[RMDB]
RNA sequence: GGGAACGACUCGAGUAGAGUCGAAAAUACAAGGCUGUGCUGACGCACGGGUUCACCCUCGAUGAAAAGGGGUACAAGAUGAGCAAGUCGCUGGGGAAUGUGGUGGACCCGCGAUCCAUCAUUGAGGUGCGAUUACGUAUUUCGAUACGUAAUCGCAAAAAGAAACAACAACAACAAC
Reactivity to DMS in 0.01 (KOAc 150mM, MgCl2 10mM, bicine 150mM(pH8.5), 24C), signal-to-noise 2, nucleotides 027 to 126: u000a120c100a060a100g000g000c020u000g030u010g000c010u010g010a160c230g000c030a060c040g020g010g000u000u020c110a080c040c000c000u000c030g000a110u010g000a040a050a140a080g000g000g010g030u010a020c110a070a140g030a110u010g010a060g000c120a080a090g010u000c020g010c040u000g000g000g010g010a120a000u000g010u000g000g020u000g010g000a070c010c030c080g000c060g020a140u000c040c020a110u000c020a030u000u000g000a140g020g020
Reactivity to 2A3 in 0.01 (KOAc 150mM, MgCl2 10mM, bicine 150mM(pH8.5), 24C), signal-to-noise 1, nucleotides 027 to 126: u170a000c040a040a040g020g000c030u030g000u040g060c050u090g070a050c130g000c010a010c030g050g000g000u040u090c040a060c000c000c000u040c040g230a240u230g080a070a000a000a000g000g020g000g020u010a050c010a030a010g030a150u100g050a040g020c050a060a030g040u030c030g000c090u260g060g000g000g010a130a150u160g030u080g010g050u070g050g010a080c000c000c000g000c030g000a010u000c010c010a030u040c010a000u020u090g070a090g000g090